[RMDB]
RNA sequence: GGGAACGACUCGAGUAGAGUCGAAAACACCCCUGGGAACACGAGGAGCAUGUGUGUUAGCUUCGGAGUGGAAGAUUUUAUGGCAGUUUAUAACCUUAAUAUACUCAGGAGGUAAUAAAUUCACUAGGCAUGCAUAGAUUUUCGAAUCUAUGCAUGCAAAAGAAACAACAACAACAAC
Reactivity to DMS in 0.01 (KOAc 150mM, MgCl2 10mM, bicine 150mM(pH8.5), 24C), signal-to-noise 3, nucleotides 027 to 126: c210a130c050c000c020c020u000g020g000g010a180a100c030a040c040g010a300g010g000a070g000c050a060u000g020u010g010u000g010u010u000a070g010c020u000u000c030g020g010a300g000u010g000g000a130a140g000a110u000u000u000u000a020u010g000g010c110a030g000u010u010u010a050u000a130a040c010c000u000u000a050a050u000a080u000a170c030u010c020a020g000g000a070g010g000u000a070a050u000a030a040a110u020u000c050a060c090u010a110g020
Reactivity to 2A3 in 0.01 (KOAc 150mM, MgCl2 10mM, bicine 150mM(pH8.5), 24C), signal-to-noise 2, nucleotides 027 to 126: c030a010c000c000c000c010u030g040g030g010a020a010c010a000c020g040a070g000g010a020g060c010a090u110g070u040g050u040g100u280u170a030g000c000u010u010c030g060g070a090g000u050g010g030a060a020g050a020u070u080u100u100a050u040g040g050c030a050g030u040u130u090a130u060a020a010c000c000u060u040a100a000u060a030u050a100c040u030c040a000g000g050a120g090g000u050a100a000u090a050a090a080u130u080c030a010c110u050a020g110
Structure probing data (DMS and 2A3) for a 177-nucleotide construct. The RNA was probed in 150 mM KOAc, 10 mM MgCl2 and 150 mM bicine (pH 8.5) at 24 C.